[RMDB]
RNA sequence: GGGAACGACUCGAGUAGAGUCGAAAACGCAUCGGGCAAGCAAAGAAAAAACAAGGCAGGGAGGUACUUACCUGAGAAAGGAGCCCCGGGGCAACUCUUCUCAGAAUCCAGCGAGAGGCGUGGAGAGGUUAUAUCAGUAGUUCGCUACUGAUAUAACAAAAGAAACAACAACAACAAC
Reactivity to DMS in 0.01 (KOAc 150mM, MgCl2 10mM, bicine 150mM(pH8.5), 24C), signal-to-noise 2, nucleotides 027 to 126: c160g010c030a040u010c070g000g000g020c080a070a060g000c060a020a050a140g040a010a050a060a070a090a090c080a070a050g010g020c040a050g000g020g010a060g010g010u010a080c050u000u000a060c150c000u010g000a060g000a010a050a060g000g010a300g010c050c030c100c250g030g000g010g020c040a060a090c010u000c150u000u000c010u000c010a030g000a100a090u000c070c030a070g010c080g000a090g010a070g010g000c070g000u000g010g000a080g010a080g000
Reactivity to 2A3 in 0.01 (KOAc 150mM, MgCl2 10mM, bicine 150mM(pH8.5), 24C), signal-to-noise 1, nucleotides 027 to 126: c030g010c000a020u040c040g010g030g030c030a030a020g050c030a100a100a120g170a090a240a000a020a010a030c120a060a020g040g000c000a010g010g010g020a020g020g000u070a080c010u050u040a020c000c000u000g000a020g020a030a070a010g030g000a020g010c020c000c020c040g220g000g000g010c000a000a070c000u040c040u020u040c000u000c000a000g000a040a060u040c050c030a000g050c000g030a080g000a040g040g080c060g050u070g030g040a030g000a020g000